[RMDB]
RNA sequence: GGGAACGACUCGAGUAGAGUCGAAAAACAUAUUACGAUAUGAUUCAGAUGGUGUCUUACUGGUUCGUACCAAGGGACAUAAUGGUUUCUUGUUUCCAACCAAAGAACACGUGGCGAGCCUGAAUAAAAAACUGACUGCCGUUCGCGGCAGUCAGAAGAUUCUAGAGCAGUUCGCUGCUCUAGAAUCAAAAGAAACAACAACAACAAC
Reactivity to 2A3 in 0.01 (KOAc 150mM, MgCl2 10mM, bicine 150mM(pH8.5), 24C), signal-to-noise 2, nucleotides 027 to 156: a000c020a010u110a020u080u170a080c050g030a020u000a030u120g090a090u020u140c040a040g050a190u100g080g060u010g000u020c010u000u080a180c100u080g000g010u020u040c030g010u020a030c050c000a010a000g020g030g000a000c000a020u200a090a190u230g150g000u000u000u000c010u010u000g000u030u020u000c020c030a000a020c020c000a090a040a030g010a060a010c000a000c050g080u080g080g050c060g020a010g030c060c030u020g080a040a010u160a070a100a060a020a010a030c010u000g030a000c000u000g000c000c010g010u020u040c210g000c020g070g010c000a000g000u010c000a010g000a010a010